[RMDB]
RNA sequence: GGGAACGACUCGAGUAGAGUCGAAAAGAGGUGAGGGUGGCAGUGGGGCUCUGCCAUCCCGCGUCCUUAUCAGUUUAUUCCGUGUCCAAUGAGAACUGAUUCCUUAUCUGAGUGAAUCUGGAGGACAACCUAAACCUACUUUCGAGUAGGUUUAGGUAAAAGAAACAACAACAACAAC
Reactivity to DMS in 0.01 (KOAc 150mM, MgCl2 10mM, bicine 150mM(pH8.5), 24C), signal-to-noise 5, nucleotides 027 to 126: g010a040g000g030u010g000a130g010g020g040u000g000g010c000a010g010u010g020g010g000g010c090u010c000u000g000c010c000a010u000c000c000c010g010c030g010u000c010c020u000u000a030u000c020a030g000u000u000u000a130u030u000c040c100g010u000g000u000c010c020a130a120u010g000a100g000a040a040c010u000g010a020u000u000c010c010u000u010a130u010c170u010g010a080g010u010g010a090a120u010c060u000g010g010a190g010g010a030c040a100
Reactivity to 2A3 in 0.01 (KOAc 150mM, MgCl2 10mM, bicine 150mM(pH8.5), 24C), signal-to-noise 4, nucleotides 027 to 126: g020a010g040g050u040g050a200g000g010g010u000g000g000c000a020g060u120g100g060g020g000c050u040c000u090g000c000c000a030u020c010c000c000g000c010g090u020c010c000u020u030a050u060c000a020g030u060u030u060a170u150u060c060c070g070u090g030u040c030c050a040a080u230g020a080g020a140a020c010u030g000a010u010u030c010c000u120u130a220u180c110u140g110a060g080u150g060a090a050u010c040u040g030g050a070g010g000a020c010a020
The record gives the reactivity of an RNA of 177 nucleotides to DMS and 2A3. Reactivities are given for positions 27 through 126. The RNA was probed in 150 mM KOAc, 10 mM MgCl2 and 150 mM bicine (pH 8.5) at 24 C. For 2A3 the reverse transcriptase was SuperScript II with manganese.